Structure probing data (DMS and 2A3) for a 177-nucleotide construct. It was measured as part of the RMDB library 15KREP.

RNA sequence: GGGAACGACUCGAGUAGAGUCGAAAAAAAAAGGUAAAACAGCCUGUGGGUGAAACACACCCACAGGGCCCAUUGGGCGCUAGCACUAUGGUAUCACGGUACCUUUGUGCGCCUGUUUUACCAAAAACACAUUAUAUGUGUUCGCACAUAUAAUGUGAAAAGAAACAACAACAACAAC
Reactivity to DMS in 0.01 (KOAc 150mM, MgCl2 10mM, bicine 150mM(pH8.5), 24C), signal-to-noise 3, nucleotides 027 to 126: a020a030a070a070a070g010g000u000a000a000a000a010c000a000g010c000c000u010g040u000g020g000g010u000g000a110a140a100c280a230c020a020c000c000c000a000c000a000g010g000g000c000c010c000a180u010u010g000g020g000c010g010c030u000a090g020c010a010c010u000a030u000g010g000u010a000u000c060a120c240g020g000u000a010c000c000u000u000u000g000u000g010c000g000c010c000u000g000u000u000u000u010a000c000c000a000a020a020a060a070
Reactivity to 2A3 in 0.01 (KOAc 150mM, MgCl2 10mM, bicine 150mM(pH8.5), 24C), signal-to-noise 2, nucleotides 027 to 126: a000a000a000a000a000g010g000u010a020a010a010a000c000a000g000c010c000u000g000u000g000g010g000u020g030a070a110a010c090a010c000a000c030c010c000a000c010a000g000g000g000c000c010c010a110u170u220g000g000g000c010g000c070u070a040g000c000a000c000u020a020u060g000g000u010a010u030c020a020c200g090g010u010a010c010c000u070u180u030g000u000g000c000g000c000c000u000g000u000u000u010u000a000c000c000a000a020a000a000a000
About this RNA: For DMS, 4,596 sequencing reads were counted. The 2A3 profile rests on 6,691 reads. Values are in units of 0.01, from 0 to 300, in steps of 10.